[RMDB]
Conditions: 150 mM KOAc, 10 mM MgCl2 and 150 mM bicine (pH 8.5), 24 C. This 207-nucleotide RNA was probed chemically with DMS and 2A3. The 2A3 profile rests on 2,254 reads. DMS adducts were read by reverse transcription with MarathonRT. Source: RMDB library RNAMAK, as collected in RNAgym.
RNA sequence: GGGAACGACUCGAGUAGAGUCGAAAACAAGAUUCGUCUUGCCAUCUGAUAUGGAUCUGAACUACGCUCGGGUAGGACGAAGAACAAGUUUCGGAAACGAAACUUGGGAGUCCUACGCGAGCGCAGAUCCUAAGUCUUCAUCUCUAUUCGUAGAGAAUUACUUGGGUUAGUUCGCUAACCCAAGUAAAAAAGAAACAACAACAACAAC
Reactivity to DMS in 0.01 (KOAc 150mM, MgCl2 10mM, bicine 150mM(pH8.5), 24C), signal-to-noise 1, nucleotides 027 to 156: c020a150a150g020a140u000u010c220g030u000c050u000u000g000c030c010a210u000c060u000g010a080u000a100u000g000g010a030u000c010u040g000a060a250c040u000a130c040g000c010u000c000g010g000g100u020a000g020g030a030c020g000a100a110g000a150a150c020a000a000g020u000u000u000c000g070g010a180a110a280c040g010a010a000a020c000u010u020g010g000g050a260g010u000c020c000u000a000c000g000c010g000a030g020c010g000c000a020g020a020u020c000c020u010a040a270g010u000c000u000u010c110a060u000c000u000c000u020a120u000u010c230g020u000a020g000a030g030a100a290
Reactivity to 2A3 in 0.01 (KOAc 150mM, MgCl2 10mM, bicine 150mM(pH8.5), 24C), signal-to-noise 3, nucleotides 027 to 156: c030a000a000g010a050u110u120c190g060u020c150u020u050g080c060c020a210u150c190u190g020a020u010a030u120g000g000a000u000c000u010g000a040a040c120u130a070c300g000c000u020c010g140g080g000u020a000g020g000a000c000g190a180a000g010a000a000c000a010a000g010u000u000u000c000g010g010a020a060a000c010g000a000a000a000c000u000u000g000g000g000a010g000u010c000c000u000a010c040g040c010g030a000g000c010g010c000a000g000a000u020c000c000u010a000a000g010u000c010u130u180c110a110u050c020u000c010u010a050u100u100c170g070u110a040g000a000g000a030a060